[RMDB]
The record gives the reactivity of an RNA of 177 nucleotides to DMS and 2A3. The reactions ran in a buffer of 150 mM KOAc, 10 mM MgCl2 and 150 mM bicine (pH 8.5), at 24 C. For DMS, 2,222 sequencing reads were counted. The 2A3 profile rests on 3,475 reads. For 2A3 the reverse transcriptase was SuperScript II with manganese. High DMS reactivity at an A or C suggests that its Watson-Crick edge is free.
RNA sequence: GGGAACGACUCGAGUAGAGUCGAAAAAAAAAAGAUAUGGACAGAACUACCUGCAAUGUAGCACGAAGAACUGACAUCGGAAACGAUGUCAGGGAGUGCUAUGACAGGCUGUCCUAAGUCAAAAAAAGUAUAUGCUUAUCUUCGGAUAAGCAUAUACAAAAGAAACAACAACAACAAC
Reactivity to DMS in 0.01 (KOAc 150mM, MgCl2 10mM, bicine 150mM(pH8.5), 24C), signal-to-noise 2, nucleotides 027 to 126: a010a020a060a020a080a070g000a020u020a240u020g010g010a010c000a000g020a090a050c050u030a300c070c000u000g000c080a050a060u000g010u000a030g020c000a010c010g000a180a110g020a080a260c020u000g000a010c000a010u000c000g030g000a090a020a120c000g000a030u000g010u000c000a010g000g000g000a030g010u000g000c010u000a010u000g020a100c010a000g010g010c000u000g000u010c000c000u000a030a090g000u010c010a000a000a050a090a150a100a110
Reactivity to 2A3 in 0.01 (KOAc 150mM, MgCl2 10mM, bicine 150mM(pH8.5), 24C), signal-to-noise 2, nucleotides 027 to 126: a030a050a070a040a000a040g010a060u050a030u100g000g000a000c010a010g020a120a090c090u110a100c280c010u020g040c020a030a120u200g010u020a000g010c000a000c070g300a300a050g000a030a000c010u000g000a000c000a010u000c010g010g000a020a060a020c010g010a000u000g000u000c000a010g030g010g000a010g000u010g010c000u010a010u030g160a020c000a010g000g010c000u000g000u000c000c000u000a040a000g000u030c050a090a150a060a020a030a000a000